[RMDB]
RNA sequence: GGGAACGACUCGAGUAGAGUCGAAAAGCGAUUUUUAUGAUGAAUAGUUGGAGCGGUAUUCAGAGCGGGCAUAACGCAUUUCGUCCAGUCUCAAAAUCAAAACCAGCAUCGAGUGAGACUUGUAAAGGAAUGAGUAGUUGUUCGCAACUACUCAUUCAAAAGAAACAACAACAACAAC
Reactivity to 2A3 in 0.01 (KOAc 150mM, MgCl2 10mM, bicine 150mM(pH8.5), 24C), signal-to-noise 1, nucleotides 027 to 126: g000c020g030a020u080u050u000u000u260a110u110g080a070u030g040a010a120u040a100g100u080u040g070g010a030g010c050g050g010u050a080u010u140c050a010g020a030g110c000g020g000g040c040a040u060a080a020c040g050c030a020u030u030u010c010g020u010c030c000a020g050u000c010u000c010a020a020a120a130u030c000a030a030a050a140c020c020a020g000c020a020u130c070g050a020g020u050g000a030g000a000c060u020u050g080u070a050a090a030g100
Reactivity to DMS in 0.01 (KOAc 150mM, MgCl2 10mM, bicine 150mM(pH8.5), 24C), signal-to-noise 2, nucleotides 027 to 126: g010c060g020a060u000u000u010u000u020a050u020g010a080u010g000a070a090u010a080g020u000u010g010g000a080g040c050g020g010u010a040u000u000c120a080g000a120g020c080g000g000g030c070a050u000a020a060c110g010c060a090u000u000u010c060g010u000c070c090a050g000u000c010u000c030a040a050a050a030u020c120a100a030a050a060c100c060a070g010c060a080u000c100g000a070g030u010g000a040g000a090c030u000u000g010u000a020a100a110g010
An RNA of 177 nucleotides, treated with 2A3 and DMS and read out base by base. The reactions ran in a buffer of 150 mM KOAc, 10 mM MgCl2 and 150 mM bicine (pH 8.5), at 24 C. 2A3 is a SHAPE reagent: it acylates the 2'-hydroxyl of flexible nucleotides of all four kinds. Source: RMDB library RFMREP, as collected in RNAgym. Values cover nucleotides 27 to 126.